The record gives the reactivity of an RNA of 207 nucleotides to 2A3 and DMS. DMS adducts were read by reverse transcription with MarathonRT. In probing experiments dimethyl sulfate is read out at A N1 and C N3, which are open when not base-paired. The reactions ran in a buffer of 150 mM KOAc, 10 mM MgCl2 and 150 mM bicine (pH 8.5), at 24 C.
[RMDB]
RNA sequence: GGGAACGACUCGAGUAGAGUCGAAAAGAAAGAAAGUACUGAAAGUAUUGUGGGAAAUAAUGUGUAAAUCAUUGACCGUUCCUGCGCUGGUAAGAAUAAAAUUUUAGUCCAGACACCACCAGUUUAACCAAUCUAGUGACCUUCGGGUCACUAGAAAGAUUAUUUCUAGGUUCGCCUAGAAAUAAUCAAAAGAAACAACAACAACAAC
Reactivity to 2A3 in 0.01 (KOAc 150mM, MgCl2 10mM, bicine 150mM(pH8.5), 24C), signal-to-noise 2, nucleotides 027 to 156: g040a020a060a000g040a050a080a000g050u040a020c030u050g050a150a100a020g060u110a130u250u130g000u040g000g000g050a020a040a070u080a000a000u040g030u010g010u050a020a050a040u040c010a020u010u020g030a010c000c010g030u080u090c040c020u050g020c050g000c030u010g000g010u030a050a020g030a120a040u170a110a190a070a070u080u090u020u050a000g000u000c000c010a000g010a020c030a020c050c000a000c000c000a000g000u000u060u130a030a060c030c000a020a040u040c000u000a000g000u000g010a010c000c000u040u030c250g080g000g000u010c000a000c000u000a000g000a000a000a000
Reactivity to DMS in 0.01 (KOAc 150mM, MgCl2 10mM, bicine 150mM(pH8.5), 24C), signal-to-noise 1, nucleotides 027 to 156: g020a160a110a140g010a160a050a120g010u000a060c000u020g000a080a100a220g010u000a020u000u000g000u040g000g050g000a070a030a090u020a050a030u000g000u010g000u010a150a060a300u000c030a040u000u000g010a040c040c000g030u020u000c030c010u010g030c100g040c000u000g020g000u020a090a120g000a030a070u000a050a100a050a300u040u000u000u000a180g020u010c000c040a040g000a150c200a050c030c020a020c000c090a170g000u000u010u000a040a100c040c030a090a190u000c000u020a000g010u000g010a030c000c000u000u030c300g040g010g020u000c010a010c000u000a000g000a000a080a040